[RMDB]
RNA sequence: GGGAACGACUCGAGUAGAGUCGAAAAGAUAUGGAAUGCUUCCACCCUGAUCCGGAUGGACAUGAUGUUGGAUCGGAAACGAUCCAUCAUCAACAGCCAUGGAUCAGGGUGGAAGCAUUCCUAAGUCGAAUAAUCAACACUUCGGUGUUGAUUAUUCAAAAGAAACAACAACAACAAC
Reactivity to DMS in 0.01 (KOAc 150mM, MgCl2 10mM, bicine 150mM(pH8.5), 24C), signal-to-noise 2, nucleotides 027 to 126: g000a100u010a300u000g010g020a040a000u000g000c010u000u000c000c000a010c010c000c000u020g000a010u010c000c000g000g020a100u010g000g000a030c140a260u000g000a000u010g020u000u000g000g000a000u000c000g020g010a110a120a260c010g020a020u010c000c000a000u000c010a010u000c000a010a020c220a170g000c010c000a020u000g000g000a010u000c000a000g000g000g030u010g000g000a000a000g010c000a000u000u000c000c000u000a000a050g010u010c100